[RMDB]
RNA sequence: GGGAACGACUCGAGUAGAGUCGAAAAACGAGUCGUACGCGACUCGAAUGGUAUUGUCGGCGUAAAAGAACAAGACGUCACCGGACGCGACCGGGCUAAAACGCGAAACGUCAUCUACGGAUGACGAAAAACGGACCUGGGUUCGCCCAGGUCCGAAGAUAUCUGAGUAGUUCGCUACUCAGAUAUCAAAAGAAACAACAACAACAAC
Reactivity to 2A3 in 0.01 (KOAc 150mM, MgCl2 10mM, bicine 150mM(pH8.5), 24C), signal-to-noise 5, nucleotides 027 to 156: a000c000g000a000g000u000c000g000u040a030c230g010c010g100a000c000u000c000g010a010a080u070g040g040u160a160u160u210g130u140c060g010g000c010g020u030a040a070a060a110g130a130a060c030a080a040g090a050c010g000u010c010a000c020c000g010g010a040c000g020c000g030a140c000c000g000g010g010c060u120a090a110a010a000c000g010c000g040a100a040a010c020g000u000c000a000u000c000u040a030c180g120g000a010u000g010a000c000g030a020a020a000a000a000c000g000g000a000c000c000u010g010g000g080u050u100c150g070c030c000c010a000g000g000u000c000c000g000a000a000
Reactivity to DMS in 0.01 (KOAc 150mM, MgCl2 10mM, bicine 150mM(pH8.5), 24C), signal-to-noise 1, nucleotides 027 to 156: a120c020g020a010g000u010c000g050u000a140c220g030c070g050a030c000u030c010g000a030a080u000g030g040u020a020u000u000g010u010c030g010g000c040g080u000a040a080a070a110g000a120a100c110a080a090g020a120c020g000u000c050a180c020c000g000g040a100c070g020c070g000a240c000c010g010g000g010c130u000a030a070a040a120c040g030c000g000a090a060a160c010g000u020c010a000u000c030u020a110c240g000g000a040u000g000a000c010g020a010a000a020a050a140c010g020g000a010c000c010u000g010g000g020u000u000c300g030c000c010c000a010g000g010u010c000c010g000a000a000
Structure probing data (2A3 and DMS) for a 207-nucleotide construct.
For DMS, 2,472 sequencing reads were counted.
For 2A3, 4,360 sequencing reads were counted.
The RNA was probed in 150 mM KOAc, 10 mM MgCl2 and 150 mM bicine (pH 8.5) at 24 C.
It was measured as part of the RMDB library M2RFPK.